Structure probing data (DMS and 2A3) for a 177-nucleotide construct. For DMS, 2,368 sequencing reads were counted. The 2A3 profile rests on 1,824 reads. 2A3 adducts were read by reverse transcription with SuperScript II with manganese.

RNA sequence: GGGAACGACUCGAGUAGAGUCGAAAAGACACUCUUCGCAGAUGACCUCCUCGUUGGUGCGUGUCGGUAAUGUUGUCAGUCACAGGCAACAGUUAACGAUCUGCCUAAAUAAAAAGAGAAGAACAAAAUGAUCCCACUGAUUCGUCAGUGGGAUCAUAAAAGAAACAACAACAACAAC
Reactivity to DMS in 0.01 (KOAc 150mM, MgCl2 10mM, bicine 150mM(pH8.5), 24C), signal-to-noise 2, nucleotides 027 to 126: g010a040c170a070c030u010c050u000u020c060g010c040a020g000a050u000g000a050c030c020u010c000c000u010c100g000u010u020g030g010u000g000c040g000u000g000u000c010g000g000u000a120a000u000g000u000u000g000u000c010a010g050u030c270a020c200a080g000g000c000a030a010c000a000g010u020u000a050a080c010g010a010u000c050u080g000c030c040u020a050a030a070u060a010a120a130a120a030g000a130g000a080a090g000a040a150c190a080a010a020
Reactivity to 2A3 in 0.01 (KOAc 150mM, MgCl2 10mM, bicine 150mM(pH8.5), 24C), signal-to-noise 3, nucleotides 027 to 126: g060a000c010a030c030u010c000u080u060c050g030c060a000g000a160u020g050a080c000c000u010c000c000u080c030g000u000u120g050g100u100g000c050g000u040g050u040c000g000g000u070a080a040u050g000u010u000g000u030c020a060g120u110c040a020c030a080g000g000c000a000a000c000a030g030u000u010a050a010c010g000a000u010c000u010g000c000c000u200a140a140a060u250a030a150a070a060a000g110a010g040a130a000g010a030a010c050a100a130a020